[RMDB]
Chemical mapping of a 207-nucleotide RNA with 2A3 and DMS. For 2A3 the reverse transcriptase was SuperScript II with manganese. Reactivities are given for positions 27 through 156. It was measured as part of the RMDB library M2RFPK.
RNA sequence: GGGAACGACUCGAGUAGAGUCGAAAAGAUGUUCGCUGAUUCGUCAGCCGCAUGCCAAGGUGGCCGCGAUCUUCAAGGCUACGGCGCGGAUAGGUCCGCGCUGAUCGUUUUCCUCCAACGACGCUAUAAAAGGAACGAAGGUUCGCCUUCGUUCCAAUCAUAGUCGUACGUUCGCGUACGACUAUGAAAAAGAAACAACAACAACAAC
Reactivity to 2A3 in 0.01 (KOAc 150mM, MgCl2 10mM, bicine 150mM(pH8.5), 24C), signal-to-noise 3, nucleotides 027 to 156: g120a010u070g000u070u150c100g000c010u000g020a050u040u080c140g080u010c090a010g000c000c020g020c000a030u120g060c010c060a050a030g040g010u020g010g000c000c020g030c080g050a020u000c000u010u030c010a010a010g010g000c000u020a010c010g000g000c000g000c010g000g020a050u170a210g190g130u020c020c000g000c000g000c010u010g000a030u010c000g000u040u020u040u060c050c030u090c090c030a110a030c080g120a060c020g040c120u080a060u060a290a150a050a040g010g010a000a000c000g000a000a010g030g000u010u120c160g080c020c000u000u010c010g000u000u000c000c000a000a000
Reactivity to DMS in 0.01 (KOAc 150mM, MgCl2 10mM, bicine 150mM(pH8.5), 24C), signal-to-noise 1, nucleotides 027 to 156: g020a060u000g000u010u000c090g020c030u000g010a060u010u010c210g020u000c000a080g000c000c030g000c020a040u010g000c050c030a100a160g030g020u000g060g030c000c030g030c040g000a050u000c020u000u000c130a070a300g030g080c030u000a050c030g000g040c000g000c030g000g000a110u000a140g040g000u000c000c010g030c020g070c000u000g010a090u000c020g000u040u060u000u000c060c010u000c000c000a030a130c030g010a080c030g040c070u000a060u000a060a150a090a170g000g010a030a030c010g000a050a030g010g010u000u000c300g010c010c000u000u000c010g030u000u000c000c000a010a040